[RMDB]
Chemical mapping of a 177-nucleotide RNA with 2A3 and DMS. For 2A3, 4,186 sequencing reads were counted.
RNA sequence: GGGAACGACUCGAGUAGAGUCGAAAAAGAACCAAAUACUUGAUUGUUUUGAGUCUCAUUUUCCUUUUCCACGUCAUCUAACUUAAAAUAUCAGGAAGGAAAUUCAUGGCAAUUCAUGGAACAGAUGACCACUGUAAGUUUUCGAACUUACAGUGGUAAAAGAAACAACAACAACAAC
Reactivity to 2A3 in 0.01 (KOAc 150mM, MgCl2 10mM, bicine 150mM(pH8.5), 24C), signal-to-noise 6, nucleotides 027 to 126: a010g040a040a010c030c000a060a090a030u210a050c030u080u030g050a110u120u020g030u010u040u020u030g030a040g040u010c020u010c120a140u060u030u030u050c010c000u110u050u080u080c040c060a100c090g140u070c030a090u030c120u110a080a140c040u140u240a100a070a090a060u230a090u160c070a020g030g040a020a000g010g050a000a040a030u010u030c020a000u050g040g010c050a090a100u110u080c010a030u050g050g030a080a080c040a080g140a130u120g020
Reactivity to DMS in 0.01 (KOAc 150mM, MgCl2 10mM, bicine 150mM(pH8.5), 24C), signal-to-noise 4, nucleotides 027 to 126: a100g010a170a160c030c030a080a080a050u050a080c100u000u000g010a130u000u010g000u010u000u010u000g000a040g010u000c010u000c030a040u010u000u000u000c010c010u010u000u010u000c040c070a070c150g010u000c110a040u040c110u020a050a100c120u010u020a050a080a150a050u010a040u020c140a080g020g000a020a050g010g000a020a060a020u010u000c020a020u000g000g010c100a040a030u030u040c030a000u000g030g000a040a090c170a050g030a090u020g010

Source: RMDB library OK1LIB, as collected in RNAgym.